[RMDB]
RNA sequence: GGGAACGACUCGAGUAGAGUCGAAAAAAUACGAUAUAGCGUUACUUCCGAACGGCAAACCAUGGCACUACGAAGUAAACGUAUGAUAGGCAAGAGUAAAGAAAACGCAUUAAUCAAGCGUAGUAUAUCAAUUAUACGGUUUCGACCGUAUAAUUGAAAAAGAAACAACAACAACAAC
Reactivity to DMS in 0.01 (KOAc 150mM, MgCl2 10mM, bicine 150mM(pH8.5), 24C), signal-to-noise 9, nucleotides 027 to 126: a040a040u020a060c100g000a090u000a070u020a090g000c020g000u000u000a020c010u000u000c010c000g010a140a190c280g000g000c010a030a070a110c300c280a070u030g010g000c000a020c010u010a300c300g000a020a010g010u010a020a030a030c010g030u010a030u010g010a070u020a030g010g000c060a060a080g000a060g010u010a020a080a100g000a070a040a060a040c020g000c000a050u020u010a050a040u020c140a070a050g000c010g010u000a080g020u020a070u000a070
Reactivity to 2A3 in 0.01 (KOAc 150mM, MgCl2 10mM, bicine 150mM(pH8.5), 24C), signal-to-noise 9, nucleotides 027 to 126: a010a000u240a020c060g030a040u050a010u060a160g030c010g010u000u010a010c000u000u000c020c000g020a070a060c120g020g000c010a030a050a070c060c020a250u300g090g000c010a020c050u030a000c020g010a010a010g010u050a020a180a010c010g010u020a060u100g100a070u090a040g100g030c080a060a020g040a020g100u200a090a100a050g120a030a090a020a000c000g000c020a030u070u130a080a060u180c070a060a030g020c020g000u000a010g110u020a050u020a010